[RMDB]
RNA sequence: GGGAACGACUCGAGUAGAGUCGAAAACAGCCCCAGGGCCCUGCUCUUUGGGGGCCGUCUCUACACCCAGAGAAGCAGCAAGGCAUUCCUAGGUUUCUCUUUCAGAUGCAGAACUUCAGUGUUCAGAGAUGUUCCCACUGGUCCUGAGAGGGCUCAGGUCUAUCAUGUGGUUCGCCACAUGAUAGACAAAAGAAACAACAACAACAAC
Reactivity to 2A3 in 0.01 (KOAc 150mM, MgCl2 10mM, bicine 150mM(pH8.5), 24C), signal-to-noise 1, nucleotides 027 to 156: c040a020g040c000c010c010c020a040g030g020g000c010c040c070u110g070c030u040c030u170u190u140g010g000g000g010g020c020c030g030u000c000u040c000u000a110c030a030c050c060c020a000g030a000g010a040a020g000c010a020g110c050a140a090g090g000c080a120u250u220c010c000u040a040g040g010u030u070u020c010u020c000u040u120u180c140a080g010a080u090g140c060a070g040a170a070c010u140u170c080a130g090u000g020u160u080c030a010g000a000g000a030u010g060u020u040c010c000c000a000c010u020g010g030u100c010c040u080g000a050g080a030g040g010g010c000u020c010a000g080